[RMDB]
RNA sequence: GGGAACGACUCGAGUAGAGUCGAAAAAGGUGUGGAGCGACCUUAAACAGUUCUCGUGGUGCUCUGAAUGGAGUGCUCUACUGAGAUUAUAAAAUAGAAGGUAAGCUAUUAUCUCUUACAACAGGGCGAAGCACUCGGGGGUUCGCCCCCGAGUGAAUCUGCAACAAUAGUUCGCUAUUGUUGCAGAAAAAGAAACAACAACAACAAC
Reactivity to 2A3 in 0.01 (KOAc 150mM, MgCl2 10mM, bicine 150mM(pH8.5), 24C), signal-to-noise 3, nucleotides 027 to 156: a020g000g000u030g040u070g030g000a010g000c010g010a020c000c000u070u090a120a090a010c050a050g010u050u030c010u020c020g050u070g030g030u060g010c000u000c000u020g140a090a070u270g020g020a020g010u030g020c010u050c070u070a060c040u070g000a010g010a060u070u080a090u190a170a120a050a040u070a020g060a100a010g100g040u110a060a020g020c020u000a010u070u040a060u070c030u000c010u030u060a050c040a120a030c010a070g020g010g010c030g050a090a030g040c000a000c000u000c000g000g000g020g000g000u010u020c070g100c000c010c000c000c000g000a000g000u000g000a000a020
Reactivity to DMS in 0.01 (KOAc 150mM, MgCl2 10mM, bicine 150mM(pH8.5), 24C), signal-to-noise 1, nucleotides 027 to 156: a070g010g050u000g020u000g040g000a120g030c020g000a160c000c030u000u000a080a110a130c000a160g030u010u000c020u010c000g020u000g000g030u000g030c010u000c010u020g000a150a100u010g000g000a060g020u010g000c010u000c070u000a040c030u020g010a080g000a070u000u000a170u000a050a090a110a110u010a100g040a150a140g050g010u000a060a120g010c070u010a100u010u000a060u010c020u000c010u000u000a120c070a080a210c030a030g000g000g020c010g000a020a110g010c030a000c000u000c010g010g010g000g050g030u000u010c280g010c000c000c000c000c000g020a010g010u000g000a010a040